[RMDB]
RNA sequence: GGGAACGACUCGAGUAGAGUCGAAAAUCGUCCGUAUAGAUGGCAAUCAUGCGUUGCGGUAAUAUUAUGCUGCGAAAUAUCGAGUAGACGAGGUCCACUUGCAGUUCGUCGAUCAUGAGGAUAUAGCGAUCGGCGCAUACGGCGAACGCGUCCAUGAGGAAGAGCUGAUAUUCGUAUCAGCUCUUCCAAAAGAAACAACAACAACAAC
Reactivity to 2A3 in 0.01 (KOAc 150mM, MgCl2 10mM, bicine 150mM(pH8.5), 24C), signal-to-noise 3, nucleotides 027 to 156: u070c060g190u100c000c010g000u030a010u080a080g180a120u080g070g000c020a030a090u100c080a140u190g050c050g040u040u080g000c000g010g050u050a070a140u160a140u300u140a080u180g020c030u020g030c020g060a050a080a040u170a080u140c080g010a010g090u110a040g090a050c050g010a080g090g100u010c020c000a030c060u060u140g000c020a040g000u090u010c000g020u000c000g010a010u010c050a050u120g070a050g140g040a100u130a040u090a250g140c070g010a020u020c010g030g000c030g000c000a000u030a030c000g010g000c010g040a080a010c070g010c000g030u000c010c000a030u000g010a000
Reactivity to DMS in 0.01 (KOAc 150mM, MgCl2 10mM, bicine 150mM(pH8.5), 24C), signal-to-noise 1, nucleotides 027 to 156: u000c030g010u000c050c080g000u000a080u000a090g010a090u000g030g010c110a080a080u010c080a060u000g030c140g010u000u000g000c000g030g040u020a060a120u000a150u010u010a110u010g000c010u000g020c030g070a120a060a100u000a060u000c050g030a160g000u010a070g000a030c000g050a080g070g020u000c020c020a050c060u000u010g130c060a080g030u000u000c070g030u000c010g030a040u000c010a200u000g000a250g030g000a270u000a080u050a110g000c000g000a040u010c020g000g040c040g010c050a050u000a020c040g010g000c040g040a060a060c020g000c030g040u000c020c030a090u020g000a300